[RMDB]
Structure probing data (DMS and 2A3) for a 177-nucleotide construct.
For 2A3 the reverse transcriptase was SuperScript II with manganese.
High DMS reactivity at an A or C suggests that its Watson-Crick edge is free.
RNA sequence: GGGAACGACUCGAGUAGAGUCGAAAAGAUAUGGAAAGCAGGGAGGUGUCGUUCGGAAACGAACGUCACCGAGGAUCUGCCUUCCUAAGUCAAAACGCUGGUGACAAGUUCGCUUGUCACCAGCGAACCUACUUUAGAUGUUCGCAUCUAAAGUAGGAAAAGAAACAACAACAACAAC
Reactivity to DMS in 0.01 (KOAc 150mM, MgCl2 10mM, bicine 150mM(pH8.5), 24C), signal-to-noise 3, nucleotides 027 to 126: g010a020u000a050u000g000g000a010a000a080g000c000a000g000g010g000a010g040g020u000g000u000c000g000u000u000c000g020g000a000a010a040c000g010a010a000c000g000u000c000a000c000c000g000a170g000g000a140u000c000u000g010c000c020u010u000c000c000u000a010a080g000u000c010a070a080a110a170c040g030c000u000g010g010u000g000a030c010a010a010g020u000u010c250g010c010u000u000g010u000c000a000c000c010a020g000c000g000a010a040
Reactivity to 2A3 in 0.01 (KOAc 150mM, MgCl2 10mM, bicine 150mM(pH8.5), 24C), signal-to-noise 2, nucleotides 027 to 126: g000a020u020a010u050g010g000a000a000a000g000c010a000g010g010g010a040g000g000u000g010u010c000g000u010u000c000g000g010a010a010a000c000g010a000a000c000g010u030c020a000c010c000g000a030g000g000a000u000c000u000g010c000c000u010u010c000c000u000a020a010g010u000c020a000a020a100a190c030g020c020u000g000g010u000g000a000c000a020a010g020u080u160c290g140c190u010u000g010u000c010a000c010c000a010g000c000g000a000a000